[RMDB]
RNA sequence: GGGAACGACUCGAGUAGAGUCGAAAAUGCGGUAUACAAGGACACCCACCACACCCCUCCGCUGAUUACCGAGCUCCGCAACUUUGCGGACCUGGUUAACCACCCGCCGGUCCUACGCGAACUGGAGCUUCUAGCCCACUUUCGAGUGGGCUAGAAGAAAAGAAACAACAACAACAAC
Reactivity to 2A3 in 0.01 (KOAc 150mM, MgCl2 10mM, bicine 150mM(pH8.5), 24C), signal-to-noise 3, nucleotides 027 to 126: u100g000c030g030g020u100a070u010a230c060a070a060g040g020a010c030a070c040c000c000a000c030c000a070c010a020c000c010c000c000u050c000c040g050c040u080g030a070u010u170a030c000c000g030a010g030c020u000c000c000g010c040a070a250c150u210u120u190g020c030g000g000a010c000c010u070g000g030u030u040a060a070c020c000a000c030c000c010g000c000c000g000g010u000c000c000u040a070c070g030c000g020a070a010c050u080g080g010a060g070
Reactivity to DMS in 0.01 (KOAc 150mM, MgCl2 10mM, bicine 150mM(pH8.5), 24C), signal-to-noise 2, nucleotides 027 to 126: u010g010c020g000g050u040a010u020a050c100a070a110g010g000a130c050a070c090c040c070a070c050c010a040c050a080c070c000c020c030u020c010c000g000c060u000g000a110u010u030a080c060c000g030a070g000c090u000c010c040g000c110a080a130c250u000u050u010g010c010g000g000a030c040c020u030g000g000u030u000a040a090c140c050a110c050c010c030g030c000c010g020g010u000c040c040u000a090c280g010c020g030a010a080c130u000g020g000a050g000
Structure probing data (2A3 and DMS) for a 177-nucleotide construct. Source: RMDB library OK1LIB, as collected in RNAgym. The DMS profile rests on 1,967 reads. The RNA was probed in 150 mM KOAc, 10 mM MgCl2 and 150 mM bicine (pH 8.5) at 24 C.